[RMDB]
RNA sequence: GGGAACGACUCGAGUAGAGUCGAAAACGUGUCUCGUUCGCGAGACACGAAAGGGAAAUGGACUGACCGGCGCCGACCGCCAAACAACCGGCAAAAUAAAUAAAACCAUAAACUUCGGUUUAUGGAAUCAUAACCUAGUGUUCGCACUAGGUUAUGAAAAAGAAACAACAACAACAAC
Reactivity to DMS in 0.01 (KOAc 150mM, MgCl2 10mM, bicine 150mM(pH8.5), 24C), signal-to-noise 4, nucleotides 027 to 126: c000g010u000g000u010c010u000c000g010u000u000c200g040c000g000a030g010a020c000a000c000g020a010a040a100g000g010g000a080a070a120u020g020g020a090c050u000g010a140c050c020g000g000c070g030c030c010g000a090c050c030g020c090c050a070a110a080c110a110a090c030c030g010g000c100a150a050a050a080u010a060a070a100u010a080a060a070a160c000c000a010u000a020a000a010c010u000u020c170g020g010u000u000u000a000u010g000g010a060a060
Reactivity to 2A3 in 0.01 (KOAc 150mM, MgCl2 10mM, bicine 150mM(pH8.5), 24C), signal-to-noise 3, nucleotides 027 to 126: c010g000u000g000u000c000u000c000g020u050u020c100g000c020g070a010g010a000c010a000c000g020a030a000a000g040g010g040a030a050a130u160g010g010a010c040u030g030a060c030c020g010g000c030g010c010c000g080a240c000c020g030c030c020a070a050a060c010a030a030c020c000g030g000c040a110a050a020a030u200a060a110a010u160a040a090a020a030c010c010a000u000a010a000a000c000u040u070c220g050g000u020u000u010a000u010g000g020a000a030